[RMDB]
RNA sequence: GGGAACGACUCGAGUAGAGUCGAAAAAAGGAUGCGGAUAGCGCCGAGGCCAAGGACGAGUUGCACGACAAGACGCCCAGCCCAAUUGGGGCGGGACUGCCAUUGCUGCAGCGCCUCCGGCUCCUCACACUCUGUUACUGUUCGCAGUAACAGAGUGAAAAGAAACAACAACAACAAC
Reactivity to DMS in 0.01 (KOAc 150mM, MgCl2 10mM, bicine 150mM(pH8.5), 24C), signal-to-noise 4, nucleotides 027 to 126: a060a050g000g000a070u000g030c050g010g020a100u000a110g010c050g000c050c030g000a080g000g010c050c050a170a120g030g010a040c130g010a100g010u000u000g010c020a060c050g000a270c030a020a020g000a050c050g010c000c000c000a120g030c000c010c010a120a190u000u010g010g020g010g010c000g000g000g010a030c040u020g000c010c010a160u000u000g010c050u000g000c000a020g010c030g000c040c110u000c010c050g000g000c070u000c010c010u010c080a290
Reactivity to 2A3 in 0.01 (KOAc 150mM, MgCl2 10mM, bicine 150mM(pH8.5), 24C), signal-to-noise 4, nucleotides 027 to 126: a000a000g080g030a090u110g010c030g020g060a120u090a120g080c040g000c040c010g010a050g010g000c040c050a040a100g020g000a020c060g030a030g060u030u020g030c050a030c070g160a080c060a040a010g040a010c020g020c010c000c010a060g000c010c010c030a090a240u260u220g040g010g000g010c020g000g000g010a050c070u140g000c010c040a210u040u080g000c010u050g000c020a010g000c000g020c030c000u030c020c010g040g000c020u000c000c000u020c010a030